Notes:
An RNA of 177 nucleotides, treated with DMS and 2A3 and read out base by base. Values cover nucleotides 27 to 126. The reactions ran in a buffer of 150 mM KOAc, 10 mM MgCl2 and 150 mM bicine (pH 8.5), at 24 C. 2A3 adducts were read by reverse transcription with SuperScript II with manganese.
RNA sequence: GGGAACGACUCGAGUAGAGUCGAAAAGAUAUGGACCUCAUAUAAGGCUUUGAUCUAGCUCGGAAACGAGCUAGGGAGCCUGUAUAGGUCCUAAGUCAAACCGCAAAUUCCUUCGGGAAUUUGCGGAGCUAAAACGAAAGUUCGCUUUCGUUUUAGCAAAAGAAACAACAACAACAAC
Reactivity to DMS in 0.01 (KOAc 150mM, MgCl2 10mM, bicine 150mM(pH8.5), 24C), signal-to-noise 3, nucleotides 027 to 126: g000a030u000a260u000g000g010a010c000c000u010c300a010u010a050u000a130a080g010g010c000u000u020u020g000a100u010c000u000a000g000c000u000c000g020g000a050a050a140c000g010a010g000c000u000a000g000g000g000a000g010c000c010u000g010u000a020u000a030g000g000u000c000c000u000a010a040g010u000c020a160a180a240c000c000g000c010a020a020a010u000u000c000c000u000u010c300g030g000g000a000a000u000u010u000g010c000g020g000a010
Reactivity to 2A3 in 0.01 (KOAc 150mM, MgCl2 10mM, bicine 150mM(pH8.5), 24C), signal-to-noise 3, nucleotides 027 to 126: g010a000u030a030u070g000g000a000c040c020u060c210a020u090a000u060a220a300g020g000c030u300u300u050g020a030u030c000u010a000g000c000u000c000g010g000a040a040a020c010g000a000g000c020u000a000g000g000g000a010g000c000c010u000g000u000a050u050a010g000g000u000c000c000u000a040a000g020u000c020a030a080a100c000c000g000c000a000a010a010u020u010c020c000u060u140c300g160g000g000a010a000u000u000u000g000c000g000g000a000